An RNA of 177 nucleotides, treated with DMS and 2A3 and read out base by base.
The reactions ran in a buffer of 150 mM KOAc, 10 mM MgCl2 and 150 mM bicine (pH 8.5), at 24 C.
It was measured as part of the RMDB library OK1LIB.
For DMS the reverse transcriptase was MarathonRT.

[RMDB]
RNA sequence: GGGAACGACUCGAGUAGAGUCGAAAACAGUGUGGCCACGUCGUUUGUGGCACGGGUGCACACCCCCCGGCGCUCGGGAGCCACAUGAGCUGCUGCUGGCGCUGGGGCUGGCCCCCGUUAGGCGUGCUAGCUAUCCAAAGUUCGCUUUGGAUAGCUAAAAAGAAACAACAACAACAAC
Reactivity to DMS in 0.01 (KOAc 150mM, MgCl2 10mM, bicine 150mM(pH8.5), 24C), signal-to-noise 6, nucleotides 027 to 126: c070a100g000u020g000u010g000g000c040c000a020c010g010u040c150g020u030u030u020g020u000g000g020c030a010c010g010g000g000u000g000c020a110c080a110c120c190c010c000c000c030g000g000c000g020c000u010c040g000g000g010a010g000c000c030a220c260a200u030g020a120g000c050u020g000c010u000g010c290u010g000g000c000g020c010u000g000g000g010g010c300u000g000g000c030c040c000c020c020g000u000u020a060g010g010c030g010u000g000c080
Reactivity to 2A3 in 0.01 (KOAc 150mM, MgCl2 10mM, bicine 150mM(pH8.5), 24C), signal-to-noise 6, nucleotides 027 to 126: c040a030g090u060g010u070g230g050c040c000a020c020g060u100c060g060u070u160u210g060u050g020g000c000a000c000g000g000g000u040g000c040a020c000a100c240c000c000c000c000c010g010g000c000g000c010u140c030g010g000g020a020g000c020c020a190c060a240u270g070a050g030c070u180g040c000u030g020c040u050g030g000c000g000c000u010g000g000g000g000c000u010g000g000c010c020c000c000c020g030u050u070a070g050g020c030g010u020g030c010